This 177-nucleotide RNA was probed chemically with 2A3 and DMS.
For 2A3, 6,472 sequencing reads were counted.
For 2A3 the reverse transcriptase was SuperScript II with manganese.
For DMS, 5,874 sequencing reads were counted.
DMS (dimethyl sulfate) methylates the pairing face of unpaired adenines and cytosines.
The reactions ran in a buffer of 150 mM KOAc, 10 mM MgCl2 and 150 mM bicine (pH 8.5), at 24 C.

[RMDB]
RNA sequence: GGGAACGACUCGAGUAGAGUCGAAAAGCACGCCGGUUUGGCCACGUGCGAACACUUGAGCGGCAGAUCCUGAGCUCUUGUGGAUUAGGACGUUCUACGACAGAAAGUCUACGUAGUUCGUCCGAAAGGCAUCCAUCUGGUUCGCCAGGUGGAUGCCAAAAGAAACAACAACAACAAC
Reactivity to 2A3 in 0.01 (KOAc 150mM, MgCl2 10mM, bicine 150mM(pH8.5), 24C), signal-to-noise 6, nucleotides 027 to 126: g000c000a000c040g080c100c140g120g080u090u110u120g240g010c020c010a040c020g040u010g000c020g020a100a010c010a000c000u010u010g000a010g010c010g150g000c070a000g050a240u130c030c070u060g030a020g010c000u010c000u010u020g020u000g010g030a080u030u140a050g000g010a000c000g000u000u000c000u000a010c010g100a070c050a030g190a230a160a020g080u040c030u030a050c020g010u000a000g010u010u000c000g000u000c000c000g000a000a000a010
Reactivity to DMS in 0.01 (KOAc 150mM, MgCl2 10mM, bicine 150mM(pH8.5), 24C), signal-to-noise 2, nucleotides 027 to 126: g040c020a010c010g000c120c070g000g000u020u060u020g010g040c050c100a210c040g060u020g010c010g020a150a140c030a010c000u000u000g000a030g040c000g010g000c080a030g000a120u050c120c020u010g020a300g030c010u030c000u000u000g000u000g000g040a130u040u010a050g020g000a010c000g010u000u000c010u010a000c000g000a140c240a050g020a250a110a160g020u040c070u010a150c000g020u000a000g000u010u000c000g000u000c010c000g000a000a060a080